[RMDB]
RNA sequence: GGGAACGACUCGAGUAGAGUCGAAAAGUAUAGCAUGACUGGCAAUGCGUAUACGAUGAAUCAGCCAGAAAAGAAUCCGUUGUGCGAAAGCACUUCGGUAAUGCAUAAUCGGUUCGAGUACAGCCCGCUACGAGAACCGUUGUUAGUACGGGCUAGACACCAUAGUACGAUUCGUCGUACUAUGGUGAAAAGAAACAACAACAACAAC
Reactivity to DMS in 0.01 (KOAc 150mM, MgCl2 10mM, bicine 150mM(pH8.5), 24C), signal-to-noise 2, nucleotides 027 to 156: g030u000a060u000a060g010c020a020u000g030a220c030u000g000g000c030a200a040u000g000c010g040u010a100u000a040c050g020a050u000g000a070a110u000c100a180g020c000c010a070g000a110a110a120a140g000a210a130u020c010c000g040u010u000g020u000g030c000g010a190a140a230g030c010a010c000u020u000c020g020g000u000a020a040u000g010c090a070u010a140a060u000c060g040g020u000u000c000g010a300g000u000a080c040a070g000c020c010c030g030c060u000a030c020g040a300g000a020a060c000c020g000u010u000g000u000u000a130g030u040a100c050g010g010g010c030u000a040g020a300
Reactivity to 2A3 in 0.01 (KOAc 150mM, MgCl2 10mM, bicine 150mM(pH8.5), 24C), signal-to-noise 2, nucleotides 027 to 156: g020u020a000u020a080g000c010a000u020g060a040c010u010g030g010c050a050a000u010g020c010g010u050a000u030a060c120g100a180u190g140a060a090u140c080a000g000c020c000a020g110a030a120a010a030g100a040a040u050c000c000g000u000u000g000u000g030c010g030a040a010a000g010c000a000c000u000u000c000g000g000u010a040a010u110g060c050a150u150a230a030u290c070g010g010u010u010c010g040a000g000u020a020c000a030g040c000c000c000g000c040u030a020c040g010a010g010a050a020c010c000g020u030u000g010u000u060a050g010u000a050c070g010g030g030c020u030a020g020a070